[RMDB]
RNA sequence: GGGAACGACUCGAGUAGAGUCGAAAAGAUAUGGACCUGACAGAGAGCUAAGAUCGAUGAGUCGGAAACGACGAGAUCGAAGCUCGACGAAGUCAGGUCCUAAGUCAAAGCGUACUUCGGUACGCAACCAGUGUAUCCGGUUCGCCGGAUACACUGGAAAAGAAACAACAACAACAAC
Reactivity to 2A3 in 0.01 (KOAc 150mM, MgCl2 10mM, bicine 150mM(pH8.5), 24C), signal-to-noise 2, nucleotides 027 to 126: g020a000u030a050u130g000g000a000c000c010u000g010a000c010a000g090a000g010a010g040c000u030a060a010g000a010u020c050g150a300u210g160a140g070u020c010g050g000a030a070a010c010g010a010c040g040a070g000a070u010c000g000a030a000g000c000u000c010g010a000c000g050a060a020g020u010c010a000g000g000u020c000c000u000a010a000g010u000c050a100a060a030g010c000g010u000a000c000u030u160c300g120g000u000a000c000g030c000a000a020
Reactivity to DMS in 0.01 (KOAc 150mM, MgCl2 10mM, bicine 150mM(pH8.5), 24C), signal-to-noise 2, nucleotides 027 to 126: g000a060u000a300u010g010g000a000c000c000u010g030a000c020a050g030a150g010a010g030c010u000a040a300g000a020u010c000g020a130u020g050a250g010u000c000g000g000a040a070a220c010g030a010c000g010a090g000a010u000c000g000a270a010g000c000u000c000g020a120c250g030a050a070g000u000c000a000g000g010u000c000c000u000a000a050g000u010c040a050a050a100g000c000g010u000a000c000u000u000c210g010g000u010a020c000g010c000a040a040

An RNA of 177 nucleotides, treated with 2A3 and DMS and read out base by base. In probing experiments dimethyl sulfate is read out at A N1 and C N3, which are open when not base-paired. The data come from the RNA Mapping Database (RMDB), library TTRDEL. The reactions ran in a buffer of 150 mM KOAc, 10 mM MgCl2 and 150 mM bicine (pH 8.5), at 24 C.